Source information
An RNA of 177 nucleotides, treated with DMS and 2A3 and read out base by base. For 2A3 the reverse transcriptase was SuperScript II with manganese. Source: RMDB library OK2TRN, as collected in RNAgym.
RNA sequence: GGGAACGACUCGAGUAGAGUCGAAAACUCUAAUGAUGGAGGGGUGGCAUCCCUCAGUGAAUGGAAAAGCAAUUAUCAAUGUUUGAGUCUCGAAGGAACUUAGACAGAGAUGGUUUGGUCCUGGGACAGCAAUAUACCCUUUCGAGGGUAUAUUGCUAAAAGAAACAACAACAACAAC
Reactivity to DMS in 0.01 (KOAc 150mM, MgCl2 10mM, bicine 150mM(pH8.5), 24C), signal-to-noise 4, nucleotides 027 to 126: c070u000c020u000a060a100u000g000a110u020g020g000a020g000g010g010g020u010g020g000c110a220u010c010c010c000u000c020a060g020u010g010a150a050u000g020g020a020a080a100a140g010c080a020a020u000u000a020u000c020a010a190u000g010u000u000u000g000a010g010u000c120u000c020g020a140a150g000g000a050a030c010u000u000a010g000a000c010a000g000a300g000a020u000g000g010u000u000u010g030g000u000c010c010u000g000g000g000a090c200
Reactivity to 2A3 in 0.01 (KOAc 150mM, MgCl2 10mM, bicine 150mM(pH8.5), 24C), signal-to-noise 2, nucleotides 027 to 126: c000u010c040u040a210a180u090g120a000u110g070g010a000g060g010g000g000u060g030g000c030a050u010c000c000c000u000c000a000g030u030g080a060a130u050g000g050a000a030a040a090g100c050a020a010u020u020a000u090c040a040a020u020g020u000u020u050g020a000g020u020c050u040c250g130a190a090g130g000a010a000c000u010u000a030g020a030c000a010g000a000g000a010u020g030g000u080u070u110g050g000u000c000c010u020g030g040g050a010c020